[RMDB]
RNA sequence: GGGAACGACUCGAGUAGAGUCGAAAAGCUCUGUAAUGGGAUGGGAUCCGAAGCCCCAUUGAGGGAUAAUACAGGCUCUCCCAACCAACUCCUAUUCCAACACGUCCUCGUCGUACAGAGUGGUAACUAAGGUAUAGCUCCUUCGGGAGCUAUACAAGAUCUAAUCUGAGUUCGCUCAGAUUAGAUCAAAAGAAACAACAACAACAAC
Reactivity to DMS in 0.01 (KOAc 150mM, MgCl2 10mM, bicine 150mM(pH8.5), 24C), signal-to-noise 2, nucleotides 027 to 156: g010c000u000c010u000g050u000a060a060u000g000g000g020a030u000g010g000g000a130u000c050c040g000a130a210g050c020c000c000c020a300u000u000g000a100g000g000g000a140u010a090a110u000a160c070a160g030g000c030u020c050u000c050c030c030a080a080c050c030a070a070c080u000c010c010u000a090u000u000c020c000a030a210c040a070c050g010u000c050c020u000c050g000u010c030g010u000a000c030a020g000a020g020u000g000g000u000a070a120c100u010a080a080g010g010u000a030u000a010g020c000u000c000c010u000u000c290g050g020g000a020g000c000u000a000u000a000c000a050a060
Reactivity to 2A3 in 0.01 (KOAc 150mM, MgCl2 10mM, bicine 150mM(pH8.5), 24C), signal-to-noise 1, nucleotides 027 to 156: g010c000u010c010u050g040u060a110a080u100g060g000g070a100u030g010g000g020a030u200c030c020g050a050a010g030c010c000c020c020a130u100u140g040a300g020g000g010a020u040a150a040u120a160c110a050g010g000c010u000c000u000c000c000c000a000a020c030c010a020a030c030u060c000c010u030a040u070u030c040c030a070a010c040a030c100g060u090c010c030u100c060g090u020c010g010u020a020c020a000g020a020g030u050g030g030u070a070a080c070u050a120a070g090g000u000a000u000a000g000c000u000c000c000u040u040c040g040g010g000a000g040c000u000a000u000a000c000a000a000